[RMDB]
RNA sequence: GGGAACGACUCGAGUAGAGUCGAAAAGCUUUUUUUUCGGAUUACGCGUGGAGGCGAAAGUCACCCUCCUCGCAUCGCAAGUUCGUGCUUGCGACUUACACGUAGGGCGAGGGGUGGGCGAAAGUUGAAAACACGAUGUUGUUCGCAACAUCGUGAACCAUCUUGACUCUUUCGAGAGUCAAGAUGGAAAAGAAACAACAACAACAAC
Reactivity to 2A3 in 0.01 (KOAc 150mM, MgCl2 10mM, bicine 150mM(pH8.5), 24C), signal-to-noise 2, nucleotides 027 to 156: g020c000u110u010u010u040u010u010u060u130c160g080g000a190u210u070a080c020g010c000g000u030g020g010a010g010g000c080g110a160a060a070g080u080c050a080c030c000c000u020c000c000u000c010g010c020a010u000c000g020c010a020a040g000u160u300c200g190u300g030c010u010u000g000c000g000a000c000u010u080a020c080a000c040g080u070a000g000g100g040c090g050a060g030g030g000g020u260g050g000g000c050g060a110a000a010g020u000u010g060a000a020a020a020c000a000c000g000a000u000g010u000u000g020u030u020c190g000c080a000a000c000a000u040c000g000u000g000a000a000
Structure probing data (2A3) for a 207-nucleotide construct. The reactions ran in a buffer of 150 mM KOAc, 10 mM MgCl2 and 150 mM bicine (pH 8.5), at 24 C. For 2A3, 1,102 sequencing reads were counted. For 2A3 the reverse transcriptase was SuperScript II with manganese.